[RMDB]
RNA sequence: GGGAACGACUCGAGUAGAGUCGAAAACCACCAGCGUUUUUUGCUCUUCGCGGGCAAUGGCGAUGCCGGGGAUCAAAUAGGAGAGCGUUUUCCCAACGCCGGUGGGGGCUUCAAUCGCCAGAUGCCGCAAUUAAUCCCGAUUCGUCGGGAUUAAUUGAAAAGAAACAACAACAACAAC
Reactivity to DMS in 0.01 (KOAc 150mM, MgCl2 10mM, bicine 150mM(pH8.5), 24C), signal-to-noise 3, nucleotides 027 to 126: c010c000a050c040c050a030g000c020g010u000u000u000u010u020u000g010c000u000c010u010u000c010g030c200g030g010g010c010a030a090u010g000g000c010g010a040u000g020c020c010g030g000g020g000a200u010c170a050a100a110u000a100g010g000a020g000a020g010c010g020u000u000u010u010c080c070c040a100a060c020g020c010c040g010g010u000g000g000g010g000g000c050u010u010c110a060a300u000c000g010c000c010a040g000a090u000g000c010c010g010
Reactivity to 2A3 in 0.01 (KOAc 150mM, MgCl2 10mM, bicine 150mM(pH8.5), 24C), signal-to-noise 2, nucleotides 027 to 126: c020c000a010c030c020a030g040c000g000u030u050u050u070u300u300g000c010u000c000u030u020c040g050c140g090g030g000c000a000a040u030g000g000c000g010a000u020g040c020c020g110g030g060g050a060u210c120a080a110a110u220a130g000g000a010g000a000g000c010g000u110u040u060u050c000c010c030a010a000c040g000c000c000g010g000u010g010g010g010g020g000c000u120u110c060a050a060u010c010g030c010c000a000g010a050u120g000c020c010g080